[RMDB]
RNA sequence: GGGAACGACUCGAGUAGAGUCGAAAAAGCGAAAUUCUGUGUGGGCUGUGUGGGCAGGUCACAUGUAUGAGUGAACCAUACGGGAAGGCAGUAUGUUAAUACUAUUUGUGUAUUUUGUAUUAAACAUGCAUAUGUACUUGUAGACAACUUAAUUACAUCGUUACUGCCAUUUCGAUGGCAGUAACGAAAAAGAAACAACAACAACAAC
Reactivity to 2A3 in 0.01 (KOAc 150mM, MgCl2 10mM, bicine 150mM(pH8.5), 24C), signal-to-noise 2, nucleotides 027 to 156: a000g160c090g030a080a120a000u210u050c040u020g020u030g000u050g010g060g060c020u010g020u010g020u100g090g060g000c030a020g010g060u020c000a040c010a040u100g030u110a070u140g050a080g040u070g000a040a050c000c000a060u060a080c090g080g000g010a000a000g040g020c000a000g000u000a020u060g050u000u000a030a020u010a030c050u020a110u070u130u040g190u050g040u050a040u000u140u110u060g000u000a000u050u050a020a090a000c010a000u030g000c000a020u020a090u180g030u000a090c000u000u030g020u030a000g010a030c020a140a000c080u150u130a040a070u180u030a040c050a040

This 207-nucleotide RNA was probed chemically with 2A3. The RNA was probed in 150 mM KOAc, 10 mM MgCl2 and 150 mM bicine (pH 8.5) at 24 C. The 2A3 profile rests on 931 reads.